[RMDB]
RNA sequence: GGGAACGACUCGAGUAGAGUCGAAAAUGUCGCAGUUAACUCUGCUCCGAAAAGCCGCUCGAAAGAGUCAUGGUGUCCUUGAAGGCUAGUCAGUUCGCUGGCGACAUUUCCAAAUUGCGGGAAACUCCUUAGAGCUCAAGCUACCGCCUCUGUUUAGCCCACUUUAAUCGUUCGCGAUUAAAGUGGGAAAAGAAACAACAACAACAAC
Reactivity to 2A3 in 0.01 (KOAc 150mM, MgCl2 10mM, bicine 150mM(pH8.5), 24C), signal-to-noise 1, nucleotides 027 to 156: u070g000u000c000g000c000a000g010u030u030a050a000c080u000c010u080g040c010u050c030c070g060a100a020a030a030g120c040c010g010c010u000c000g040a060a040a020g040a000g000u040c060a050u090g000g010u040g060u050c020c010u000u060g090a090a010g010g010c040u060a010g050u160c080a010g000u000u030c030g030c070u060g100g000c000g010a000c000a010u010u010u010c030c020a100a040a020u220u140g050c050g000g110g040a100a090a080c060u080c010c030u100u080a100g000a000g120c040u080c060a070a000g010c030u050a100c000c030g070c060c030u050c010u010g120u020u000u090a060g000